[RMDB]
Description: Conditions: 150 mM KOAc, 10 mM MgCl2 and 150 mM bicine (pH 8.5), 24 C. Structure probing data (DMS and 2A3) for a 177-nucleotide construct. 2A3 is a SHAPE reagent: it acylates the 2'-hydroxyl of flexible nucleotides of all four kinds. Values cover nucleotides 27 to 126.
RNA sequence: GGGAACGACUCGAGUAGAGUCGAAAAGGUGUGGUGGUACUGAUCUCCGCGAUUUUGGUACUGGUGUUGGGUAUCUAUCCGCAACCGUUGAUAACACUGGUGCAGAUGGCUCAGCCCUUGAUGUGAAUAAAAUAUAGUGGUUCGCCACUAUAUUUUAAAAAGAAACAACAACAACAAC
Reactivity to DMS in 0.01 (KOAc 150mM, MgCl2 10mM, bicine 150mM(pH8.5), 24C), signal-to-noise 9, nucleotides 027 to 126: g010g020u010g020u000g010g020u000g010g010u000a040c070u000g010a070u000c040u000c070c100g020c110g010a080u000u000u010u010g010g020u000a040c050u000g010g010u000g020u000u000g010g010g010u000a080u010c060u010a050u010c030c050g010c050a070a070c030c050g010u000u010g010a140u010a090a100c140a040c040u000g030g010u000g010c020a040g000a040u000g000g000c070u000c050a080g010c010c010c020u000u000g010a100u000g010u000g000a090a170
Reactivity to 2A3 in 0.01 (KOAc 150mM, MgCl2 10mM, bicine 150mM(pH8.5), 24C), signal-to-noise 5, nucleotides 027 to 126: g030g020u070g010u040g070g040u040g020g010u050a050c030u040g040a070u000c040u010c040c060g040c060g030a030u080u090u120u200g070g020u070a050c020u040g020g010u060g010u070u040g020g020g000u040a090u040c050u050a030u020c020c010g030c070a070a130c020c010g020u050u080g080a150u090a220a040c050a000c060u100g000g000u020g000c000a020g020a080u030g030g000c010u000c040a030g020c010c020c010u020u090g070a100u070g060u020g080a100a090